[RMDB]
About this RNA:
Structure probing data (DMS) for a 177-nucleotide construct. The DMS profile rests on 438 reads. The reactions ran in a buffer of 150 mM KOAc, 10 mM MgCl2 and 150 mM bicine (pH 8.5), at 24 C. It was measured as part of the RMDB library OK2TRN.
RNA sequence: GGGAACGACUCGAGUAGAGUCGAAAAGCAACGCCGCGUGAGCGAAGAAGGCCUUCGGGUCGUAAAGCUCUGUUGUCAGGGAAGAACAAGUACCGGAGUAACUGCCGGUACCUUGACGGUACCUGACGCGGCGUGUUGUAUUCGUACAACACGCCGCAAAAGAAACAACAACAACAAC
Reactivity to DMS in 0.01 (KOAc 150mM, MgCl2 10mM, bicine 150mM(pH8.5), 24C), signal-to-noise 1, nucleotides 027 to 126: g030c080a080a180c040g040c040c000g020c020g040u000g020a020g000c000g010a060a180g010a220a290g000g030c020c000u020u010c230g020g000g030u000c020g000u000a080a080a300g000c000u000c000u000g000u010u060g060u000c000a100g000g000g000a110a200g000a020a210c060a000a020g000u000a000c000c000g000g000a000g000u000a020a080c300u000g000c010c000g020g000u000a000c000c090u000u000g130a210c080g000g020u000a210c000c000u000g000a000c000